[RMDB]
RNA sequence: GGGAACGACUCGAGUAGAGUCGAAAAACCACGGGUGAAAUCUAUUGUAGAAGGGCAACCUUAUGCAGUAGUAAAGUAGUCCCUCUGGUCCAUUGUAAUGUCGACCAAGAACAGUUUCAGGUGGGGAUAGCUUCAUAGCGUUCGCGCUAUGAAGCUAAAAAGAAACAACAACAACAAC
Reactivity to 2A3 in 0.01 (KOAc 150mM, MgCl2 10mM, bicine 150mM(pH8.5), 24C), signal-to-noise 2, nucleotides 027 to 126: a000c000c000a020c050g010g000g020u000g000a000a000a000u020c000u010a010u010u020g030u020a010g030a030a000g100g010g000c100a110a120c040c000u000u000a010u050g000c000a010g000u000a000g010u200a000a000a000g010u000a010g030u010c000c000c000u030c010u000g000g000u070c040c000a070u080u160g130u190a060a110u130g000u080c050g020a070c000c060a010a030g040a040a030c040a150g000u000u070u030c020a050g080g000u030g010g080g050g000a020
Reactivity to DMS in 0.01 (KOAc 150mM, MgCl2 10mM, bicine 150mM(pH8.5), 24C), signal-to-noise 1, nucleotides 027 to 126: a080c000c000a130c190g010g090g000u000g000a230a190a170u050c010u000a010u000u070g000u040a000g000a000a000g010g000g000c190a180a050c000c000u000u000a010u000g050c000a000g020u000a000g000u020a000a000a060g030u000a080g000u000c000c000c130u080c070u000g010g000u000c050c040a170u000u010g070u020a160a050u000g060u000c140g030a090c020c000a100a000g000a050a020c080a120g000u000u000u000c020a050g000g000u000g000g000g000g050a240